[RMDB]
RNA sequence: GGGAACGACUCGAGUAGAGUCGAAAACUCACAGAUCUGGGUACCUUAAAGCAACUUUUGUGCAAGCUUUGUCACAAUUGAAAUCAUUGUUGGUUAGAAAAGGUGAUCGGGUUGGUUUAAUAUACGGGAAUACAUAGUCAUUCGUGACUAUGUAUUCAAAAGAAACAACAACAACAAC
Reactivity to DMS in 0.01 (KOAc 150mM, MgCl2 10mM, bicine 150mM(pH8.5), 24C), signal-to-noise 9, nucleotides 027 to 126: c020u000c030a160c130a200g010a020u000c020u000g000g010g020u010a050c020c020u000u000a050a100a100g010c070a080a120c030u000u000u000u000g030u000g010c040a070a140g010c220u010u000u000g000u010c020a020c010a020a020u000u000g000a090a090a080u010c130a080u000u010g000u000u000g010g010u000u000a090g010a100a070a050a030g010g010u000g000a030u010c030g010g010g020u000u000g010g010u000u010u000a050a080u000a100u010a080c190g000g010
Reactivity to 2A3 in 0.01 (KOAc 150mM, MgCl2 10mM, bicine 150mM(pH8.5), 24C), signal-to-noise 4, nucleotides 027 to 126: c010u020c010a040c030a050g070a040u030c010u030g040g000g000u010a020c000c000u030u050a130a080a020g030c010a010a070c010u050u040u070u050g010u020g000c020a050a080g160c100u190u210u100g080u220c010a000c010a040a050u020u080g100a140a090a050u100c040a070u030u120g050u040u030g080g060u080u060a040g090a060a220a010a000g000g010u020g020a030u020c010g000g020g000u020u040g030g050u050u130u090a170a120u170a020u060a100c060g120g020